RNA sequence: GGGAACGACUCGAGUAGAGUCGAAAAAGCCUGGUCGAUACGUCGACCAGGCAAUGCCGCCACAACGGCUUCCUGGCGUGGCGGAUCUCCUCCAAUGGAGCAACGCUCCGGAUACGUCCGGAGCGAAAAAAGCUCUGCUUCUUCGGAAGCAGAGCAACCUCAUAUUCUACUUCGGUAGAAUAUGAGGAAAAGAAACAACAACAACAAC
Reactivity to 2A3 in 0.01 (KOAc 150mM, MgCl2 10mM, bicine 150mM(pH8.5), 24C), signal-to-noise 2, nucleotides 027 to 156: a000g300c000c000u000g000g010u000c000g000a020u010a100c190g040u020c000g010a010c000c000a000g000g010c000a000a000u010g020c020c000g000c010c000a020c010a040a040c040g090g030c000u200u170c000c020u030g000g000c000g000u000g000g000c010g010g000a010u030c010u000c040c010u070c040c070a100a120u230g010g020a000g010c010a060a050c020g000c010u000c000c020g000g000a020u050a040c250g060u010c000c040g000g010a000g000c000g010a010a000a000a000a000a000g010c000u030c010u000g000c000u000u000c000u000u020c060g090g000a000a000g000c010a000g010a000g000c000a000a010